[RMDB]
The record gives the reactivity of an RNA of 177 nucleotides to 2A3. Values cover nucleotides 27 to 126. The reactions ran in a buffer of 150 mM KOAc, 10 mM MgCl2 and 150 mM bicine (pH 8.5), at 24 C. For 2A3 the reverse transcriptase was SuperScript II with manganese. Source: RMDB library M2PK50, as collected in RNAgym. The 2A3 profile rests on 1,123 reads.

RNA sequence: GGGAACGACUCGAGUAGAGUCGAAAACGAUAAGCAUUCGUGCUUAUCGACGGUACGAAAGUACAAAGGAGGAAAAGCAUCGGCUCCUAAAAACGAUGCAAAAGACAACGGGGUUCGCCCCGUUGAAACGCUAUAUGUGCUUCGGCACAUAUAGCGUAAAAGAAACAACAACAACAAC
Reactivity to 2A3 in 0.01 (KOAc 150mM, MgCl2 10mM, bicine 150mM(pH8.5), 24C), signal-to-noise 1, nucleotides 027 to 126: c000g000a000u000a000a010g000c010a000u070u160c200g130u070g000c010u000u020a000u000c000g000a000c000g090g000u000a010c000g070a060a030a050g010u000a010c070a090a180a080g030g010a000g000g030a240a120a010a000g000c000a000u000c010g090g030c020u000c040c120u150a060a080a010a020a030c020g000a000u000g000c000a020a120a040a000g070a010c010a020a000c000g000g000g000g000u020u060c140g110c010c010c000c010g000u000u000g000a000a000